[RMDB]
RNA sequence: GGGAACGACUCGAGUAGAGUCGAAAAAGGGAAGAAAAUCAUUUAGAAAGGAGAUUCCGCCCCAGCUUGCGGUGCGGCCGAAAGGCUGUAAGGCAUCCCGGAGAGGGGAGGCAAGGCGAAAGCCAAAAACGGUACACCAUCUUCGGAUGGUGUACAACAAUGUCAUUCAGUUCGCUGAAUGACAUUGAAAAGAAACAACAACAACAAC
Reactivity to 2A3 in 0.01 (KOAc 150mM, MgCl2 10mM, bicine 150mM(pH8.5), 24C), signal-to-noise 3, nucleotides 027 to 156: a000g070g020g010a040a020g090a050a110a010a050u100c040a060u090u260u210a120g080a110a100a050g060g020a090g020a010u040u050c010c040g030c000c010c000c010a000g040c040u070u120g110c040g030g010u030g010c020g040g010c000c000g050a030a020a010g010g000c020u000g040u120a050a010g050g000c010a040u050c000c000c020g020g000a080g020a000g020g000g000g010a010g000g000c050a010a050g010g000c050g040a060a030a010g020c040c020a090a030a000a040a020c110g050g000u000a000c000a000c000c000a020u000c010u020u040c160g030g000a000u000g000g000u000g000u000a000c000a000a000
Reactivity to DMS in 0.01 (KOAc 150mM, MgCl2 10mM, bicine 150mM(pH8.5), 24C), signal-to-noise 1, nucleotides 027 to 156: a020g010g000g000a130a090g020a060a070a090a190u000c050a120u000u000u010a150g010a160a090a110g020g010a040g000a210u000u010c010c010g020c050c020c030c010a280g010c020u000u010g000c050g030g020u000g040c010g040g000c000c000g010a060a110a140g050g030c080u010g020u000a050a050g000g040c010a070u000c020c010c010g000g010a160g000a070g000g000g000g010a060g010g000c080a040a050g030g000c100g000a140a060a180g010c010c000a020a020a030a060a150c090g000g010u000a010c010a020c000c010a000u000c000u010u010c300g070g010a000u010g000g000u000g010u000a000c000a030a070